An RNA of 207 nucleotides, treated with 2A3 and DMS and read out base by base. The RNA was probed in 150 mM KOAc, 10 mM MgCl2 and 150 mM bicine (pH 8.5) at 24 C. For DMS the reverse transcriptase was MarathonRT. The DMS profile rests on 2,748 reads.
RNA sequence: GGGAACGACUCGAGUAGAGUCGAAAAUCACCAGAUGCUGCAUCACCUGAUCAAUGAUGGCUCAACGGUAUCCGGCGGUACAACUGAAUACUUGUAGCUGCCUUUUGAGCGGGUUGGCUGCAAUCCGAAAAGAGGACACACUUCGGUGUGUCCUCAACAAGGUACUGAACUUCGGUUCAGUACCUUGAAAAGAAACAACAACAACAAC
Reactivity to 2A3 in 0.01 (KOAc 150mM, MgCl2 10mM, bicine 150mM(pH8.5), 24C), signal-to-noise 3, nucleotides 027 to 156: u070c010a000c020c000a000g000a030u020g000c030u010g020c000a020u020c010a040c020c010u030g030a030u020c030a010a050u060g060a040u050g040g000c020u040c080a070a070c040g020g000u020a020u020c030c000g030g020c050g070g110u180a090c070a130a030c130u120g080a130a050u090a100c040u050u130g010u090a010g020c040u030g020c000c000u020u090u050u040g030a010g000c010g040g000g010u140u260g080g020c010u000g000c000a010a120u060c030c010g050a070a040a020a050g000a000g000g000a000c010a000c000a000c030u080u130c180g040g000u000g010u000g000u000c000c000u000c000a000a000
Reactivity to DMS in 0.01 (KOAc 150mM, MgCl2 10mM, bicine 150mM(pH8.5), 24C), signal-to-noise 1, nucleotides 027 to 156: u000c020a170c010c030a100g020a060u000g030c020u000g050c010a150u010c080a050c040c010u000g000a150u000c040a090a080u020g000a030u000g000g010c000u010c020a070a080c080g000g010u000a010u010c020c010g020g020c000g040g000u030a100c170a080a110c030u000g000a050a060u020a050c060u000u000g010u020a010g020c010u000g000c020c000u000u000u000u000g010a070g020c050g030g010g000u000u010g020g000c080u040g030c030a090a020u000c010c010g030a080a070a120a150g010a040g000g000a020c010a010c000a010c000u000u000c290g000g030u000g030u000g020u000c010c000u000c020a000a010